[RMDB]
RNA sequence: GGGAACGACUCGAGUAGAGUCGAAAAGAUAUGGACCUGUAAUCGUCCAGAACUACGCACCAGUGUCGGAAACGACACGGUGCGCUGGACGUGCAGGUCCUAAGUCAAAGAGACCUUCGGGUCUCAAGAGUCCAUACUUGUUCGCAAGUAUGGACUCAAAAGAAACAACAACAACAAC
Reactivity to 2A3 in 0.01 (KOAc 150mM, MgCl2 10mM, bicine 150mM(pH8.5), 24C), signal-to-noise 1, nucleotides 027 to 126: g040a000u070a040u260g000g000a000c000c000u000g000u030a220a300u300c050g020u000c010c010a000g020a080a090c300u300a030c060g010c000a000c000c030a170g000u000g000u000c020g030g000a100a080a080c020g040a020c000a010c000g000g000u000g070c000g000c010u010g000g000a000c000g010u000g000c010a000g030g000u000c000c000u010a000a000g010u010c010a000a060a040g000a000g010a000c000c000u040u060c300g140g010g020u000c000u000c000a020a020
Reactivity to DMS in 0.01 (KOAc 150mM, MgCl2 10mM, bicine 150mM(pH8.5), 24C), signal-to-noise 1, nucleotides 027 to 126: g010a020u000a300u010g000g000a000c000c000u000g030u000a040a110u010c040g010u010c000c000a000g040a140a060c180u010a300c000g010c000a010c030c000a120g040u010g010u000c000g020g010a110a080a300c000g040a000c000a010c000g000g020u000g010c000g000c000u010g010g010a010c000g080u000g000c000a020g000g000u000c010c010u020a000a020g000u010c030a080a140a130g000a000g000a020c000c000u000u000c260g010g000g000u000c010u040c000a040a040